[RMDB]
RNA sequence: GGGAACGACUCGAGUAGAGUCGAAAAGAGUACAUAUGCCCAGCCUUACUGAUACGGCUGGAUGCUUCGUGCAAAUGCUAUGUACGCCUACGUAUAUGUGCGUAGAUGCCUAUAUUUUCUCUCCUGAGAAAAUAUAGAUGCAUACAAAGUAUAUGCAGGGGAUAUUAUACUUCGGUAUAAUAUCCCCAAAAGAAACAACAACAACAAC
Reactivity to 2A3 in 0.01 (KOAc 150mM, MgCl2 10mM, bicine 150mM(pH8.5), 24C), signal-to-noise 4, nucleotides 027 to 156: g040a020g000u010a000c010a010u020a010u290g020c020c010c000a020g010c010c010u180u210a180c130u190g080a150u120a200c080g000g000c010u010g010g000a010u080g000c020u070u150c150g160u200g030c000a040a090a120u190g000c010u020a000u010g010u010a000c010g040c000c000u030a030c020g040u030a050u010a030u180g090u040g030c010g020u040a050g000a080u030g000c020c000u000a000u000a000u020u000u000u010c000u000c010u080c050c190u130g000a000g000a000a000a000a000u000a000u000a000g010a010u110g000c000a000u040a080c010a000a130a010g030u020a040u010a010u130g030c050a030
Reactivity to DMS in 0.01 (KOAc 150mM, MgCl2 10mM, bicine 150mM(pH8.5), 24C), signal-to-noise 2, nucleotides 027 to 156: g000a160g030u000a050c020a110u000a060u000g050c010c030c000a100g020c000c000u000u020a300c100u000g010a060u000a150c180g000g050c010u020g030g010a050u000g000c030u010u000c130g110u010g000c070a080a110a110u000g000c000u000a090u010g020u030a000c000g020c000c000u000a000c000g010u000a130u000a070u000g060u000g000c240g040u000a030g000a070u000g000c010c040u000a030u000a000u000u000u000u000c000u000c020u000c220c150u030g000a020g000a010a000a030a000u010a000u000a000g000a090u000g040c000a150u000a050c020a100a130a140g030u000a030u000a050u040g000c010a220